[RMDB]
RNA sequence: GGGAACGACUCGAGUAGAGUCGAAAAAUCUAUUUGGACAAUAUAACUAUAUGCACACUCAUCUCCGUCAGUAUAAGUUGUAGGUAUUGGGUCGUCGAUAUCGUCAAUAACAAUAAAAGGUACAUCAUCUCUGUAAUCAUUUCGAUGAUUACAGAGAAAAAGAAACAACAACAACAAC
Reactivity to 2A3 in 0.01 (KOAc 150mM, MgCl2 10mM, bicine 150mM(pH8.5), 24C), signal-to-noise 3, nucleotides 027 to 126: a000u090c090u070a130u070u140u100g070g030a030c030a070a020u060a030u010a300a040c070u030a020u020a040u300g060c020a020c000a000c040u010c000a060u020c030u000c030c000g110u060c020a010g070u030a080u010a240a050g060u030u080g020u050a060g050g020u050a040u050u050g040g000g010u010c050g040u000c030g000a030u020a010u090c020g010u000c000a070a110u100a080a010c040a060a020u170a160a060a040a030g110g000u060a050c000a060u090c020a030
Reactivity to DMS in 0.01 (KOAc 150mM, MgCl2 10mM, bicine 150mM(pH8.5), 24C), signal-to-noise 4, nucleotides 027 to 126: a070u000c060u000a080u000u010u010g010g010a090c040a060a090u000a060u010a120a100c090u000a090u000a050u000g020c040a080c050a100c060u010c060a100u000c050u000c050c050g010u010c060a090g020u010a060u010a070a080g000u010u000g010u000a110g030g020u000a020u000u000g010g020g000u000c060g010u000c030g000a060u000a060u010c050g020u010c070a050a040u010a060a070c060a050a060u010a040a050a090a040g010g000u000a050c130a060u000c150a130
Conditions: 150 mM KOAc, 10 mM MgCl2 and 150 mM bicine (pH 8.5), 24 C. An RNA of 177 nucleotides, treated with 2A3 and DMS and read out base by base. DMS adducts were read by reverse transcription with MarathonRT. For 2A3 the reverse transcriptase was SuperScript II with manganese.